An RNA of 207 nucleotides, treated with 2A3 and DMS and read out base by base. For DMS, 2,195 sequencing reads were counted.
[RMDB]
RNA sequence: GGGAACGACUCGAGUAGAGUCGAAAAAUGGUAGAUAGUCUACUCGCUAUCCUAGUUACUUUGGAGUAAUCUAAAGUGUGUGUAAACGGGCGAAAGUCUGUAAAAUACUGGGGACAUAGGGUCAACAAGAACUAGUAGACCUUCGGGUCUACUAGAACCUAGGUGGAUACUUCGGUAUCCACCUAGGAAAAGAAACAACAACAACAAC
Reactivity to 2A3 in 0.01 (KOAc 150mM, MgCl2 10mM, bicine 150mM(pH8.5), 24C), signal-to-noise 1, nucleotides 027 to 156: a000u060g030g010u050a010g020a080u020a070g090u040c030u030a040c020u020c050g050c030u030a020u090c020c000u040a050g040u050u060a010c000u000u000u050g020g010a010g000u090a180a100u020c000u040a030a040a020g010u030g020u020g000u000g050u070a070a160a020c010g000g000g020c020g010a110a030a010g010u000c000u000g070u070a000a110a000a000u080a050c040u020g000g000g000g030a000c030a030u080a010g030g010g050u060c020a010a020c030a140a090g040a110a020c000u000a000g010u000a000g000a000c000c000u020u030c130g110g000g000u000c000u000a000c000u000a000g000a000a000
Reactivity to DMS in 0.01 (KOAc 150mM, MgCl2 10mM, bicine 150mM(pH8.5), 24C), signal-to-noise 1, nucleotides 027 to 156: a050u000g010g000u000a090g010a150u010a090g000u000c010u020a050c040u010c060g020c020u010a070u010c010c020u000a130g020u000u010a010c010u000u010u000g010g040a070g000u000a100a180u000c030u000a020a020a030g010u020g050u000g040u000g000u000a070a170a070c030g070g010g020c000g010a180a010a140g010u000c020u000g010u000a020a050a060a110u000a010c040u000g040g000g080g010a100c060a050u010a020g030g030g000u000c080a070a050c030a020a130g010a100a240c000u000a010g000u000a000g010a030c000c000u000u000c260g030g040g000u010c000u000a000c010u010a000g000a010a110
2A3 adducts were read by reverse transcription with SuperScript II with manganese. Reactivities are given for positions 27 through 156.